The record gives the reactivity of an RNA of 177 nucleotides to DMS and 2A3.
[RMDB]
RNA sequence: GGGAACGACUCGAGUAGAGUCGAAAAUAAACCCUGCGAGCGAGAAACCCAAAUUUGGUAGGGGAACCGUCCUGAAGGAAUCAAACGGAAGGGACGGAUGGUAUCUUCGGAUGCCAUAGAUAGAUGGCCUUUGUACAUGGUUCGCCAUGUACAAAGGAAAAGAAACAACAACAACAAC
Reactivity to DMS in 0.01 (KOAc 150mM, MgCl2 10mM, bicine 150mM(pH8.5), 24C), signal-to-noise 2, nucleotides 027 to 126: u000a100a070a180c030c010c000u000g000c040g000a040g020c110g000a060g000a140a140a040c000c010c010a080a060a160u000u020u010g010g020u000a040g020g030g000g000a080a170c010c000g020u000c000c010u000g010a300a140g000g020a110a110u010c200a050a150a160c020g000g000a230a150g010g000g000a020c030g000g010a000u000g000g020u000a010u000c000u000u000c140g000g000a020u000g030c000c000a010u000a000g000a100u020a070g000a150u000g010g010
Reactivity to 2A3 in 0.01 (KOAc 150mM, MgCl2 10mM, bicine 150mM(pH8.5), 24C), signal-to-noise 1, nucleotides 027 to 126: u030a010a010a030c010c000c010u000g010c000g030a160g020c040g020a050g040a090a080a090c000c020c000a110a120a090u270u120u060g120g000u020a010g010g020g000g000a010a040c000c000g000u010c020c040u080g030a050a030g020g050a040a170u190c050a130a120a030c000g040g010a050a000g030g000g000a000c000g010g000a000u010g010g010u030a020u000c000u000u030c110g030g010a000u000g020c020c000a000u010a030g070a010u010a000g130a040u140g120g020
For DMS the reverse transcriptase was MarathonRT.